RNA sequence: GGGAACGACUCGAGUAGAGUCGAAAAAAUAGCGGGUCAAGGUACAACGCAGAGAGAUAGGCUCAUCCCAAGUUCUCUUCGGAGUACCAAGACUUCGGUACAGAAGAGAUACCGACUCUUGAUAGAAUAAGAGUUCAAUAUUCGUAUUGAACUCUUAAAAAGAAACAACAACAACAAC
Reactivity to 2A3 in 0.01 (KOAc 150mM, MgCl2 10mM, bicine 150mM(pH8.5), 24C), signal-to-noise 2, nucleotides 027 to 126: a000a020u190a060g070c070g000g000g000u020c010a030a020g000g010u020a010c010a050a010c030g000c030a000g010a000g010a000g010a070u060a130g000g050c020u040c060a100u090c010c010c000a000a030g040u060u010c000u000c000u010u010c000g000g010a020g000u000a000c000c000a000a000g010a010c010u030u030c020g000g010u060a030c020a030g180a090a000g020a080g010a060u070a090c030c030g070a060c040u020c010u050u130g090a180u130a190g100a100a040
Reactivity to DMS in 0.01 (KOAc 150mM, MgCl2 10mM, bicine 150mM(pH8.5), 24C), signal-to-noise 8, nucleotides 027 to 126: a070a060u000a050g020c030g010g000g010u000c010a050a300g000g000u000a010c020a030a240c030g000c100a060g000a040g000a060g000a070u010a130g010g010c080u000c300a080u010c240c010c010a090a130g020u000u010c000u000c000u000u000c000g000g010a300g020u000a000c000c000a040a270g010a030c050u000u010c020g020g010u010a050c120a140g010a050a030g000a030g000a040u010a120c040c030g020a100c140u000c010u000u000g000a140u000a110g000a090a100
Chemical mapping of a 177-nucleotide RNA with 2A3 and DMS. The 2A3 profile rests on 5,996 reads. The reactions ran in a buffer of 150 mM KOAc, 10 mM MgCl2 and 150 mM bicine (pH 8.5), at 24 C.